This 177-nucleotide RNA was probed chemically with 2A3 and DMS. For 2A3, 1,545 sequencing reads were counted. The RNA was probed in 150 mM KOAc, 10 mM MgCl2 and 150 mM bicine (pH 8.5) at 24 C. It was measured as part of the RMDB library OK1LIB.
RNA sequence: GGGAACGACUCGAGUAGAGUCGAAAAGGCCUGGAGAGGCGAAUGGUCGGGCAAACUCAUGAAGUUGAAGGGUGUCACCUCCCCGAUGACGCCCUGUAUAUACGGGUGUAUAUAUAUAUAUAUAUGACCUCAGUAGGAUAUUCGUAUCCUACUGAGGAAAAGAAACAACAACAACAAC
Reactivity to 2A3 in 0.01 (KOAc 150mM, MgCl2 10mM, bicine 150mM(pH8.5), 24C), signal-to-noise 2, nucleotides 027 to 126: g050g000c010c020u030g040g020a070g010a050g040g020c010g020a030a100u130g010g050u040c050g000g000g000c030a040a050a030c040u060c050a110u160g120a150a060g050u070u110g030a050a000g010g000g000u010g000u000c000a000c010c000u080c030c000c030c030g010a020u020g000a000c000g010c030c000c000u000g000u020a020u010a000u000a010c040g060g010g060u120g100u090a140u070a060u010a030u000a020u000a000u000a000u000a020u020a090u140g050a070
Reactivity to DMS in 0.01 (KOAc 150mM, MgCl2 10mM, bicine 150mM(pH8.5), 24C), signal-to-noise 2, nucleotides 027 to 126: g000g000c020c000u000g000g020a130g000a050g000g020c030g000a100a040u010g010g020u010c040g000g000g000c060a060a060a070c080u010c040a110u040g020a100a160g000u000u000g010a100a050g020g000g020u000g020u000c000a050c060c040u010c010c010c010c070g020a300u020g000a040c010g010c000c000c000u020g020u020a010u000a020u010a030c000g010g000g010u040g000u020a020u030a010u020a010u000a080u040a080u040a160u030a040u060a080u010g000a300